RNA sequence: GGGAACGACUCGAGUAGAGUCGAAAAACGAUCACGGUGCCCGGCCGCGACAGCGCGACCAUCAGCGGCAAAUAGGCCGGGUAGCUGUCCUUGUCGGCAUCGAGGAAGAUCAGGUCGAACGGCUCGAGGCCAUGAUAAAUUUCGAUUUAUCAUGGCCAAAAGAAACAACAACAACAAC
Reactivity to 2A3 in 0.01 (KOAc 150mM, MgCl2 10mM, bicine 150mM(pH8.5), 24C), signal-to-noise 3, nucleotides 027 to 126: a000c020g000a030u020c010a010c050g020g010u030g010c030c040c000g030g000c010c020g010c050g040a020c010a010g010c040g040c080g210a080c040c020a080u190c100a050g140c030g070g030c030a030a150a110u280a120g070g020c010c010g040g000g010u010a020g010c010u010g000u000c020c010u010u040g010u030c010g000g000c010a010u010c010g010a040g040g070a080a060g010a030u030c030a020g000g120u030c020g010a080a030c040g090g030c020u020c030g010a030
Reactivity to DMS in 0.01 (KOAc 150mM, MgCl2 10mM, bicine 150mM(pH8.5), 24C), signal-to-noise 4, nucleotides 027 to 126: a130c100g010a050u010c030a210c040g030g000u000g000c110c030c020g010g020c010c130g000c300g000a030c080a020g000c000g030c130g020a050c070c030a120u010c210a090g020c040g000g010c030a080a070a130u010a120g020g020c000c000g020g010g010u000a010g000c000u000g000u000c010c030u000u000g030u000c000g010g010c010a010u000c010g000a110g000g000a130a070g000a060u010c030a120g000g010u010c030g010a070a130c120g010g020c030u000c040g000a300
Chemical mapping of a 177-nucleotide RNA with 2A3 and DMS. Reactivities are given for positions 27 through 126. Source: RMDB library OK2TST, as collected in RNAgym. 2A3 adducts were read by reverse transcription with SuperScript II with manganese. The reactions ran in a buffer of 150 mM KOAc, 10 mM MgCl2 and 150 mM bicine (pH 8.5), at 24 C.